[RMDB]
The record gives the reactivity of an RNA of 207 nucleotides to 2A3 and DMS. Reactivities are given for positions 27 through 156. For DMS, 1,325 sequencing reads were counted.
RNA sequence: GGGAACGACUCGAGUAGAGUCGAAAAGGACUCGGAAAUCCACCGCACUAUCCAAGUAUUAUCGAGGAGAACGAAGAACAAUCCCGUCCUCAUCGGAGCGGCUGGUACCGGCAAAACUGCGAUUCUGGAAGGAUUGGCUCAGCGAAUCGUGCAGGGGGUCAUUCGUUAGAUUCGUCUAACGAAUGACAAAAGAAACAACAACAACAAC
Reactivity to 2A3 in 0.01 (KOAc 150mM, MgCl2 10mM, bicine 150mM(pH8.5), 24C), signal-to-noise 3, nucleotides 027 to 156: g040g050a060c060u040c070g030g000a060a110a060u040c010c000a010c010c040g000c030a050c040u110a070u050c010c030a080a010g100u070a170u260u080a130u200c070g000a030g040g030a030g040a070a030c080g070a110a060g040a110a030c100a030a070u070c030c010c020g020u050c000c000u010c000a070u060c080g030g010a020g010c000g050g000c050u030g010g020u050a080c040c000g020g010c030a020a040a020a080c030u060g010c020g030a010u070u020c020u070g010g030a060a020g050g010a050u030u100g050g000c020u020c050a020g030c010g090a030a040u040c040g020u070g050c020a040g000g030g000g010
Reactivity to DMS in 0.01 (KOAc 150mM, MgCl2 10mM, bicine 150mM(pH8.5), 24C), signal-to-noise 1, nucleotides 027 to 156: g020g000a010c040u020c000g010g100a090a090a130u000c040c000a100c000c040g040c040a090c060u000a200u000c040c090a100a190g040u000a110u000u000a050u000c000g020a200g010g080a080g020a050a010c010g000a040a120g030a150a170c150a040a150u000c000c000c000g040u020c000c000u010c010a060u000c030g030g000a190g040c150g070g050c110u000g020g020u000a020c040c030g040g080c080a040a050a040a070c030u000g000c010g030a120u020u000c010u020g000g090a300a110g000g000a170u010u000g000g050c080u000c020a120g020c080g000a050a080u000c060g030u020g040c030a040g000g030g030g020
The data come from the RNA Mapping Database (RMDB), library OK3TST.